This 177-nucleotide RNA was probed chemically with 2A3 and DMS. For DMS the reverse transcriptase was MarathonRT. The reactions ran in a buffer of 150 mM KOAc, 10 mM MgCl2 and 150 mM bicine (pH 8.5), at 24 C.
RNA sequence: GGGAACGACUCGAGUAGAGUCGAAAACGUGGAAGGCCUGGUGGUGAUGCAUCUCAUGAUGGAACCCCUGUCCUUGCAUAUGGUGCAUAGGCAUCGAUUGGUUAUGAGGAACGCGGCCAAGGGGGCCCGUAAUCAUGGACUUCGGUCCAUGAUUACGAAAAGAAACAACAACAACAAC
Reactivity to 2A3 in 0.01 (KOAc 150mM, MgCl2 10mM, bicine 150mM(pH8.5), 24C), signal-to-noise 4, nucleotides 027 to 126: c050g010u070g070g090a060a040g000g000c010c050u050g030g070u090g000g030u050g040a150u180g080c010a020u010c040u070c050a080u160g000a020u020g030g150a060a100c000c010c000c000u020g030u080c010c000u010u050g000c010a020u080a130u210g090g010u040g020c000a080u110a190g160g000c000a020u030c050g080a110u070u110g080g010u090u060a060u190g040a070g030g050a040a030c060g010c030g070g010c000c030a030a010g090g010g020g010g010c020c020
Reactivity to DMS in 0.01 (KOAc 150mM, MgCl2 10mM, bicine 150mM(pH8.5), 24C), signal-to-noise 5, nucleotides 027 to 126: c090g000u010g010g000a070a040g020g000c030c010u000g010g020u010g010g000u000g000a160u020g000c030a030u000c010u000c150a080u020g010a020u010g000g010a160a100c030c010c020c020u010g010u000c000c010u000u000g010c020a030u000a070u010g010g020u000g000c010a090u010a090g010g010c010a020u000c040g000a100u000u000g010g010u000u000a080u010g010a090g000g000a050a090c110g010c070g000g000c020c020a060a090g000g000g000g020g010c120c060